[RMDB]
RNA sequence: GGGAACGACUCGAGUAGAGUCGAAAAGAUAUGGACAAAAGGCUUUGAUCUACUGUUCGGAAACGAACAUGUAGGGAGCCUAGUCCUAAGUCAAACACUGCCUGAACCUUCGGGUUCAGGCAGUGAACUACAACAUAAGCUUCGGCUUAUGUUGUAGAAAAGAAACAACAACAACAAC
Reactivity to 2A3 in 0.01 (KOAc 150mM, MgCl2 10mM, bicine 150mM(pH8.5), 24C), signal-to-noise 2, nucleotides 027 to 126: g020a000u040a010u110g000g000a020c020a020a300a050a020g030g000c020u200u260u300g150a120u280c000u010a000c000u000g020u020u010c020g060g010a070a030a000c010g000a000a000c020a040u280g020u020a000g020g030g000a000g000c000c010u010a000g000u020c000c000u000a070a020g030u010c030a030a120a040c020a000c040u000g000c040c040u010g000a020a010c000c000u070u100c300g090g000g000u000u010c010a000g010g030c010a000g000u030g000a000a000
Reactivity to DMS in 0.01 (KOAc 150mM, MgCl2 10mM, bicine 150mM(pH8.5), 24C), signal-to-noise 2, nucleotides 027 to 126: g010a030u010a240u000g000g000a010c000a040a100a210a080g000g020c010u000u000u010g010a080u020c000u000a010c000u000g000u000u010c010g000g010a070a050a120c000g000a010a000c000a010u010g010u010a000g020g000g010a010g010c000c000u000a150g000u000c000c000u010a020a120g010u020c020a110a110a200c010a000c000u000g020c000c020u000g010a020a010c010c000u000u020c240g020g000g020u000u000c000a000g000g030c000a010g000u000g010a020a120